[RMDB]
RNA sequence: GGGAACGACUCGAGUAGAGUCGAAAAGGAUGAGAGCUGUAAUUUAAGAGCGCAAUCUUCACUUCGCCCCUUUUCUGCAUAAUCCUUGUUUAGCCAAAAGGCGUAGAUAACAAGUUCAUUAACAAGAUCAGAGUCAAUCGUUCGCGAUUGACUCUGAAAAAGAAACAACAACAACAAC
Reactivity to DMS in 0.01 (KOAc 150mM, MgCl2 10mM, bicine 150mM(pH8.5), 24C), signal-to-noise 2, nucleotides 027 to 126: g000g010a020u000g000a100g000a200g040c010u020g020u020a080a080u000u030u000a070a120g050a100g030c090g070c010a080a120u000c020u010u000c010a110c010u020u000c020g000c050c020c000c250u010u000u000u000c000u000g000c140a100u000a030a030u020c170c000u020u000g000u000u000u000a090g010c000c050a090a070a100a130g000g020c000g000u010a050g000a030u000a040a020c000a000a030g000u000u000c120a010u000u000a140a110c110a100a020g000a130
Reactivity to 2A3 in 0.01 (KOAc 150mM, MgCl2 10mM, bicine 150mM(pH8.5), 24C), signal-to-noise 2, nucleotides 027 to 126: g070g020a030u090g000a080g000a000g000c090u000g060u300a130a180u100u110u190a170a020g110a030g000c020g010c080a010a010u000c040u100u010c000a100c220u080u040c060g050c000c000c000c000u000u000u220u050c040u140g120c000a010u020a150a000u160c020c000u010u000g000u080u020u010a020g000c000c000a000a300a150a000g010g000c010g030u020a000g110a110u010a000a000c000a000a000g000u080u080c060a060u050u160a020a080c100a070a000g060a080
Chemical mapping of a 177-nucleotide RNA with DMS and 2A3. 2A3 is a SHAPE reagent: it acylates the 2'-hydroxyl of flexible nucleotides of all four kinds. Conditions: 150 mM KOAc, 10 mM MgCl2 and 150 mM bicine (pH 8.5), 24 C. Values cover nucleotides 27 to 126.